[RMDB]
RNA sequence: GGGAACGACUCGAGUAGAGUCGAAAACUCUUGUACGAAGUCACUGAGACUUGGGGCUAGUUUGUUACUACAGUAUUGCCCAUCCUAUCCUGCUUACUAGUCACAAAAGGGAGACAAAUGGCAAAGAAAGCAUAGCGAAGGGAAACUCAUAAAUAAGCAUCUAAGGAACUUUCGAGUUCCUUAGAUGAAAAGAAACAACAACAACAAC
Reactivity to DMS in 0.01 (KOAc 150mM, MgCl2 10mM, bicine 150mM(pH8.5), 24C), signal-to-noise 4, nucleotides 027 to 156: c060u000c010u010u000g030u000a130c080g000a070a090g030u010c020a130c060u020g010a210g020a060c060u010u010g000g020g020g020c020u000a090g020u010u000u010g000u000u000a150c040u000a080c040a130g020u000a050u010u010g000c010c030c060a090u000c040c030u000a130u010c040c020u010g000c030u000u020a050c030u000a120g020u000c040a040c070a030a070a110a110g030g030g030a190g010a090c060a050a060a130u000g020g010c030a120a070a100g010a080a060a060g020c050a060u000a060g000c120g020a080a140g020g030g000a060a060a060c030u000c070a080u000a050a060a120u000a070a170g000
Reactivity to 2A3 in 0.01 (KOAc 150mM, MgCl2 10mM, bicine 150mM(pH8.5), 24C), signal-to-noise 5, nucleotides 027 to 156: c010u020c030u080u120g050u060a070c070g080a070a020g030u020c020a030c130u140g050a020g020a160c020u050u050g010g000g000g010c010u020a020g030u040u050u130g070u060u110a070c050u030a020c020a040g050u070a110u090u140g010c010c000c010a010u040c000c010u060a090u090c000c010u010g010c000u010u010a020c020u020a020g010u030c010a000c020a070a130a060a020g040g040g010a070g010a010c020a010a100a040u040g000g000c010a060a060a060g080a050a070a000g030c020a030u090a030g060c070g060a030a020g030g010g000a030a070a010c040u110c050a070u090a120a080a030u110a080a040g050